Background:
The record gives the reactivity of an RNA of 177 nucleotides to DMS and 2A3. As a SHAPE reagent, 2A3 marks flexible, mostly unpaired nucleotides at the ribose 2'-OH. It was measured as part of the RMDB library OK1LIB. The 2A3 profile rests on 25,721 reads.

[RMDB]
RNA sequence: GGGAACGACUCGAGUAGAGUCGAAAACGGAGCAUAUGGAUUAAUUCGAUGCAACGCGAAGUACCAUACCUGGGUAUGACAUACACCGGAAAACCGUAGAGAUACGGUCCCCCUUGUGGUCGGUGUAAAAAUAAUUGAAAUUCGUUUCAAUUAUUUUAAAAGAAACAACAACAACAAC
Reactivity to DMS in 0.01 (KOAc 150mM, MgCl2 10mM, bicine 150mM(pH8.5), 24C), signal-to-noise 9, nucleotides 027 to 126: c020g000g000a300g000c030a030u000a030u030g010g000a050u010u030a090a080u010u000c010g010a020u000g010c040a040a170c030g000c060g010a090a160g000u000a030c020c010a050u020a080c030c030u000g000g000g010u000a000u010g010a120c190a190u010a010c000a000c000c000g000g000a090a090a120a020c000c000g010u000a000g000a220g000a170u000a000c000g000g000u000c010c020c000c010c040u010u010g010u040g000g000u010c000g000g010u000g010u000a000
Reactivity to 2A3 in 0.01 (KOAc 150mM, MgCl2 10mM, bicine 150mM(pH8.5), 24C), signal-to-noise 9, nucleotides 027 to 126: c020g020g000a030g010c020a010u080a080u120g070g020a040u040u120a080a120u150u040c010g010a010u030g020c020a020a020c040g010c010g040a050a010g030u010a010c000c010a010u030a030c000c020u020g050g000g000u030a000u050g010a000c000a010u050a000c000a000c000c000g020g000a020a040a010a000c000c000g000u000a010g010a000g000a040u010a010c000g000g000u010c000c000c000c000c000u070u180g050u140g050g000u020c000g000g000u000g000u010a000